[RMDB]
The record gives the reactivity of an RNA of 177 nucleotides to 2A3 and DMS.

RNA sequence: GGGAACGACUCGAGUAGAGUCGAAAAACGAAUCCUGUCAGGUCCGGAAGGAAGCAGCAGUAAGUGGUUAUUCUUGUGUGCCGCAGGGAAGCCUAGGCCGAGCCAUGAACUUAUGUAGCGCAUAGGGCCACAAUAAGUUGUUCGCAACUUAUUGUGGAAAAGAAACAACAACAACAAC
Reactivity to 2A3 in 0.01 (KOAc 150mM, MgCl2 10mM, bicine 150mM(pH8.5), 24C), signal-to-noise 2, nucleotides 027 to 126: a000c050g020a050a030u020c020c000u000g100u080c030a030g050g030u010c020c020g060g090a070a040g050g010a020a020g000c030a020g000c000a020g050u120a130a030g040u050g110g060u110u050a100u090u050c050u100u110g020u020g050u060g080c000c030g040c050a000g000g000g080a060a010g050c020c000u050a080g000g000c050c070g020a000g040c010c020a060u090g040a030a020c020u070u030a060u160g050u050a050g050c020g000c020a000u050a030g000g010g070
Reactivity to DMS in 0.01 (KOAc 150mM, MgCl2 10mM, bicine 150mM(pH8.5), 24C), signal-to-noise 2, nucleotides 027 to 126: a120c120g010a130a090u020c070c010u000g000u000c040a160g030g000u010c030c030g000g030a100a100g000g010a030a060g000c050a090g010c040a040g010u010a100a140g010u010g000g000u000u000a080u010u000c030u000u000g020u000g010u020g000c030c040g030c090a020g000g020g000a090a030g000c040c020u000a130g010g000c040c040g010a140g000c050c030a060u010g000a090a060c030u010u000a040u000g010u010a090g010c100g010c030a020u000a030g000g010g000
High DMS reactivity at an A or C suggests that its Watson-Crick edge is free. The reactions ran in a buffer of 150 mM KOAc, 10 mM MgCl2 and 150 mM bicine (pH 8.5), at 24 C. For DMS the reverse transcriptase was MarathonRT. Values cover nucleotides 27 to 126.